[RMDB]
RNA sequence: GGGAACGACUCGAGUAGAGUCGAAAAAGUAUCGGGUUCGCCCGAUACUAGAGCACCACUCCUGCGGGAGUUAAGGCCAAACGCACAGGCGGGUGCUAAGCCAACUCAAGGGUUUCGACCCUUGAAACGCCGUCAUAAUAUUCGUAUUAUGACGGCGAAAAGAAACAACAACAACAAC
Reactivity to 2A3 in 0.01 (KOAc 150mM, MgCl2 10mM, bicine 150mM(pH8.5), 24C), signal-to-noise 1, nucleotides 027 to 126: a000g010u020a010u000c000g030g050g000u040u050c190g050c010c000c000g010a000u010a000c000u000a010g020a020g000c000a000c010c010a040c010u000c010c010u100g000c210g090g000g010a010g010u010u190a090a020g110g000c020c000a120a070a010c120g070c070a040c040a090g040g060c040g000g000g020u010g010c000u000a050a000g050c010c010a050a090c060u040c020a000a000g010g020g050u000u060u140c180g090a020c000c030c000u020u000g020a010a000a000
Reactivity to DMS in 0.01 (KOAc 150mM, MgCl2 10mM, bicine 150mM(pH8.5), 24C), signal-to-noise 1, nucleotides 027 to 126: a000g000u010a000u000c000g020g000g000u000u010c300g020c000c000c010g010a010u000a020c000u000a040g050a060g010c010a020c000c030a050c000u000c010c010u010g060c160g060g020g000a100g000u010u020a080a160g020g000c070c020a070a030a060c070g020c130a070c170a120g010g000c070g030g040g000u010g000c020u010a030a120g000c070c030a150a080c080u010c000a010a000g010g020g000u000u000u020c230g000a030c000c000c000u000u000g000a010a130a220
An RNA of 177 nucleotides, treated with 2A3 and DMS and read out base by base. Reactivities are rounded to 0.1 and cut off at 0 and 3. The RNA was probed in 150 mM KOAc, 10 mM MgCl2 and 150 mM bicine (pH 8.5) at 24 C.